[RMDB]
The data come from the RNA Mapping Database (RMDB), library RFM100. The record gives the reactivity of an RNA of 177 nucleotides to 2A3 and DMS. For DMS the reverse transcriptase was MarathonRT. For 2A3 the reverse transcriptase was SuperScript II with manganese. Reactivities are given for positions 27 through 126. For DMS, 1,006 sequencing reads were counted.
RNA sequence: GGGAACGACUCGAGUAGAGUCGAAAAUAUUUAACCAACAACUCGACAUGGUCUGCUCUGGAAAUCUCCAGUGUUUACGUUGCGAAAACAAUUGAAAUCAUAACAAUAAAAUCAAAUUUGAAAUUUGAGGACUGCUAAUAUUCGUAUUAGCAGUCCUAAAAGAAACAACAACAACAAC
Reactivity to 2A3 in 0.01 (KOAc 150mM, MgCl2 10mM, bicine 150mM(pH8.5), 24C), signal-to-noise 2, nucleotides 027 to 126: u270a030u040u150u110a040a040c000c000a000a050c000a030a000c030u020c010g080a000c080a080u160g130g000u020c030u070g000c030u020c000u000g010g000a090a230a200u120c010u000c050c000a010g060u020g020u050u040u110a060c080g000u000u020g050c030g060a020a030a050a000c030a040a130u010u060g040a160a040a000u080c110a030u170a160a130c070a180a000u070a120a040a000a000u080c070a020a000a130u060u140u180g130a180a090a050u000u020u040g030
Reactivity to DMS in 0.01 (KOAc 150mM, MgCl2 10mM, bicine 150mM(pH8.5), 24C), signal-to-noise 1, nucleotides 027 to 126: u000a000u030u010u000a040a160c010c030a060a210c180a210a060c080u000c010g020a060c060a090u060g010g060u000c070u000g000c030u010c100u000g000g000a040a120a120u050c070u030c000c000a050g000u040g000u030u000u000a040c170g010u000u000g080c090g080a100a100a010a030c190a010a060u040u000g000a000a110a180u060c070a000u030a110a070c130a040a060u030a110a120a080a100u000c000a000a050a030u010u040u000g040a010a030a240u010u000u010g000